[RMDB]
RNA sequence: GGGAACGACUCGAGUAGAGUCGAAAAGAUAGUGGGCUUGAUAUUCAAACUCGCGCAGCGAUGCACUAAUAUGGCGAGCGGUGCGUUCUUCUUGCUCAGAGGCUUGCUGAAUAAAGACUUCGCGUAAAAAGGACCGAUAUUUCGAUAUCGGUCCUUUAAAAGAAACAACAACAACAAC
Reactivity to DMS in 0.01 (KOAc 150mM, MgCl2 10mM, bicine 150mM(pH8.5), 24C), signal-to-noise 1, nucleotides 027 to 126: g010a120u000a120g040u010g000g030g020c030u000u010g020a110u000a110u020u000c060a030a020a110c030u000c020g000c040g000c150a100g010c120g000a000u000g000c020a070c070u000a130a060u000a060u000g010g000c030g000a080g020c030g000g000u000g010c040g010u000u000c050u000u000c050u000u010g020c060u010c040a100g010a130g000g000c050u010u000g020c040u010g030a060a060u010a030a040a130g000a080c040u000u000c020g000c040g000u030a030a060